The data come from the RNA Mapping Database (RMDB), library 15KLIB. An RNA of 170 nucleotides, treated with DMS and 2A3 and read out base by base. The RNA was probed in 150 mM KOAc, 10 mM MgCl2 and 150 mM bicine (pH 8.5) at 24 C. Reactivities are given for positions 27 through 129.

RNA sequence: GGGAACGACUCGAGUAGAGUCGAAAAUUCGAUCCGGACCGGCUCAUCUCGGCAAGAGGCGGCAGUCCUCAGUGCUCUUACUCUUUCCUAUAAAGAGGAGACUGCUGGACUCGCCGCCCAAGCCCGAACAGACGGAGGUUCGCCUCCGUCAAAAGAAACAACAACAACAAC
Reactivity to DMS in 0.01 (KOAc 150mM, MgCl2 10mM, bicine 150mM(pH8.5), 24C), signal-to-noise 2, nucleotides 027 to 129: u050u020c000g020a090u050c040c030g020g020a000c000c040g000g000c050u020c050a090u000c020u010c050g030g000c070a040a040g070a130g000g050c040g010g020c020a000g010u000c020c010u000c060a020g030u060g060c050u030c030u010u200a300c040u010c010u000u000u000c160c170u070a110u070a090a020a030g000a040g020g000a020g010a020c030u010g040c130u000g020g000a030c020u030c230g040c000c020g010c000c000c000a000a060g020c000c000c000g030a090a070c110a090
Reactivity to 2A3 in 0.01 (KOAc 150mM, MgCl2 10mM, bicine 150mM(pH8.5), 24C), signal-to-noise 7, nucleotides 027 to 129: u030u030c020g000a030u030c030c030g020g020a030c030c000g010g000c010u020c000a080u030c040u010c020g000g000c020a070a030g100a080g020g000c000g000g000c010a000g000u000c000c000u010c000a050g010u100g230c010u020c000u050u200a240c010u020c000u020u040u060c040c110u200a160u200a260a020a000g000a000g020g000a000g020a000c000u010g030c040u000g000g000a000c000u030c080g000c000c000g000c000c000c000a000a000g000c000c010c000g010a050a030c000a010